An RNA of 177 nucleotides, treated with DMS and read out base by base. It was measured as part of the RMDB library TTRDES.
RNA sequence: GGGAACGACUCGAGUAGAGUCGAAAAGAUAUGGACUCGACAGGGUAGCUGUCAUGUCGGAAACGACAUGCAGCUAUAAUCCUGUUCGAGUCCUAAGUCAAAACUAAUGGGGUUCGCCCCAUUAGAACGUACUUUCGAACUUCGGUUCGAAAGUACGAAAAGAAACAACAACAACAAC
Reactivity to DMS in 0.01 (KOAc 150mM, MgCl2 10mM, bicine 150mM(pH8.5), 24C), signal-to-noise 1, nucleotides 027 to 126: g000a030u000a300u010g020g000a020c000u000c000g010a000c030a010g010g010g010u000a010g000c000u000g000u020c010a000u000g000u000c000g000g020a060a110a280c000g010a010c000a010u000g000c030a000g010c000u010a000u000a300a090u010c000c000u000g020u010u010c000g060a000g000u010c000c000u000a000a020g000u000c030a170a090a130a210c000u000a000a000u000g000g000g000g030u000u040c270g070c010c000c000c010a010u000u000a000g000a040a250